This 177-nucleotide RNA was probed chemically with 2A3 and DMS.
Reactivities are rounded to 0.1 and cut off at 0 and 3.
DMS adducts were read by reverse transcription with MarathonRT.
High 2A3 reactivity points to a flexible backbone, as in loops and unpaired stretches.
The 2A3 profile rests on 1,473 reads.
RNA sequence: GGGAACGACUCGAGUAGAGUCGAAAAGACGCCUGUGUGGCGAAGCGAGCAUGAGAUGGAGCCGCAAGAGAAGAUGAGAUAGAAGCGGCGAGAUAGGUUGCUCGCGAAAAGAUCCAUCUCACAGAGAAUCGGAUGACUGAUUCGUCAGUCAUCCGAUAAAAGAAACAACAACAACAAC
Reactivity to 2A3 in 0.01 (KOAc 150mM, MgCl2 10mM, bicine 150mM(pH8.5), 24C), signal-to-noise 3, nucleotides 027 to 126: g060a020c010g050c050c020u110g030u090g120u300g170g000c000g030a050a000g000c010g000a000g010c060a070u050g020a110g010a100u010g010g020a000g000c000c000g000c050a060a050g160a000g080a240a020g160a140u300g050a140g040a210u200a070g200a180a010g010c000g000g010c010g000a010g000a010u180a020g000g150u030u060g000c000u040c000g000c000g020a000a000a000a000g000a050u000c000c030a030u000c030u000c000a020c040a030g090a000g010a010
Reactivity to DMS in 0.01 (KOAc 150mM, MgCl2 10mM, bicine 150mM(pH8.5), 24C), signal-to-noise 3, nucleotides 027 to 126: g000a090c010g000c010c040u000g000u030g020u040g040g030c010g010a130a120g030c000g040a000g000c060a080u000g010a090g060a010u000g030g000a300g000c030c000g000c030a090a130g030a150g010a150a080g010a190u010g010a070g000a180u000a230g000a200a100g000c010g020g040c000g000a250g000a050u000a020g000g000u000u000g020c050u000c020g000c000g010a110a070a060a150g000a110u030c010c030a060u010c030u000c020a090c140a080g010a090g020a120